[RMDB]
Annotation: This 177-nucleotide RNA was probed chemically with DMS. Conditions: 150 mM KOAc, 10 mM MgCl2 and 150 mM bicine (pH 8.5), 24 C. Source: RMDB library OK2TRN, as collected in RNAgym.

RNA sequence: GGGAACGACUCGAGUAGAGUCGAAAAACUUGCCAUGCAGUAAUCAGCUGGAGCGGCGAUCUUUCGGAGCACGAACUAGCCAAUCUUGAGCAGUCGGCUAGGCUGGGAGCAAGUCAUGGGAUAUUAGCAACUAUCAGCCUUUCGAGGCUGAUAGUUGAAAAGAAACAACAACAACAAC
Reactivity to DMS in 0.01 (KOAc 150mM, MgCl2 10mM, bicine 150mM(pH8.5), 24C), signal-to-noise 2, nucleotides 027 to 126: a080c130u000u000g010c010c040a040u010g010c020a200g020u000a060a180u040c040a050g000c030u000g020g010a140g010c130g010g000c070g000a020u000c110u000u010u000c030g010g000a150g010c060a130c040g020a020a090c040u000a090g000c000c010a050a080u020c060u000u000g010a110g010c180a190g000u000c070g000g010c030u000a050g010g010c040u000g020g000g040a300g000c030a040a040g030u020c050a030u000g010g000g000a120u010a070u000u000a090g000